The record gives the reactivity of an RNA of 177 nucleotides to 2A3 and DMS. Source: RMDB library M2PK50, as collected in RNAgym. For 2A3, 1,496 sequencing reads were counted. Conditions: 150 mM KOAc, 10 mM MgCl2 and 150 mM bicine (pH 8.5), 24 C.

[RMDB]
RNA sequence: GGGAACGACUCGAGUAGAGUCGAAAAAGUUAUGAGUUCGCUCAUAACUACAGCGAAAGGCGCUCGGACCCGCAGACCGCCGAAGGCAUCCCAGCCUGUCCAAGUUGGUAUAUUUCGAUAUACCAAACUACACGAAAGGUUUCGACCUUUCGUGUAGAAAAGAAACAACAACAACAAC
Reactivity to 2A3 in 0.01 (KOAc 150mM, MgCl2 10mM, bicine 150mM(pH8.5), 24C), signal-to-noise 1, nucleotides 027 to 126: a020g010u030u000a000u000g000a020g030u000u140c180g090c040u000c000a010u000a010a010c000u050a030c040a020g050c030g120a120a050a020g070g000c000g000c030u050c030g120g110a170c000c000c000g000c030a020g020a040c040c020g050c000c000g020a000a000g020g000c010a030u000c000c000c010a000g030c000c020u050g010u030c050c040a070a060g090u030u020g020g010u010a000u000a000u000u140u100c240g030a000u000a000u030a040c010c000a040a040a000
Reactivity to DMS in 0.01 (KOAc 150mM, MgCl2 10mM, bicine 150mM(pH8.5), 24C), signal-to-noise 2, nucleotides 027 to 126: a030g000u000u000a010u000g000a020g000u000u010c260g020c000u000c010a000u000a000a010c000u000a050c130a110g000c050g000a070a060a090g030g000c020g010c130u000c060g000g000a090c030c060c000g000c070a120g010a040c110c010g000c020c010g000a110a040g010g000c030a070u000c020c000c020a160g000c020c020u000g000u010c060c090a100a130g010u000u000g000g020u010a000u000a000u000u010u020c160g000a020u000a000u000a000c000c000a020a010a180